This 177-nucleotide RNA was probed chemically with 2A3 and DMS.
The RNA was probed in 150 mM KOAc, 10 mM MgCl2 and 150 mM bicine (pH 8.5) at 24 C.
Source: RMDB library OK2TST, as collected in RNAgym.
The 2A3 profile rests on 3,029 reads.
For DMS, 3,181 sequencing reads were counted.
2A3 adducts were read by reverse transcription with SuperScript II with manganese.
RNA sequence: GGGAACGACUCGAGUAGAGUCGAAAAGCUUUGUCACGUAUCAAGCGUCACAUGCUUACGCAAAGGGCUUUCAAGGAAGUCGGUAUUGAAUUCAUGGAUUUGUACACUCAUCUGAUACCUGUAUACGACUCCUCCGAUAAUUCGUUAUCGGAGGAGUAAAAGAAACAACAACAACAAC
Reactivity to 2A3 in 0.01 (KOAc 150mM, MgCl2 10mM, bicine 150mM(pH8.5), 24C), signal-to-noise 3, nucleotides 027 to 126: g020c020u110u090u080g050u060c040a010c060g010u030a090u240c060a100a070g020c000g050u050c000a010c000a090u090g010c010u040u080a030c070g020c060a040a030a060g030g000g000c000u010u040u070c060a080a030g120g010a040a010g030u050c040g000g040u100a100u080u170g070a110a090u060u050c050a070u150g110g000a070u070u050u090g070u040a020c040a010c030u050c020a110u050c050u030g020a020u040a080c010c000u030g030u080a080u030a100c070g040
Reactivity to DMS in 0.01 (KOAc 150mM, MgCl2 10mM, bicine 150mM(pH8.5), 24C), signal-to-noise 4, nucleotides 027 to 126: g020c030u000u000u010g020u000c150a090c070g010u000a080u000c220a050a110g000c020g020u010c200a050c140a080u010g010c040u000u000a060c100g000c070a040a100a080g020g000g000c030u000u000u010c100a110a080g000g020a050a060g020u000c070g010g010u000a040u020u010g000a060a050u010u000c060a090u000g010g010a070u010u000u000g000u000a050c060a040c050u000c060a050u000c040u000g000a100u000a080c020c020u010g030u000a080u000a070c150g000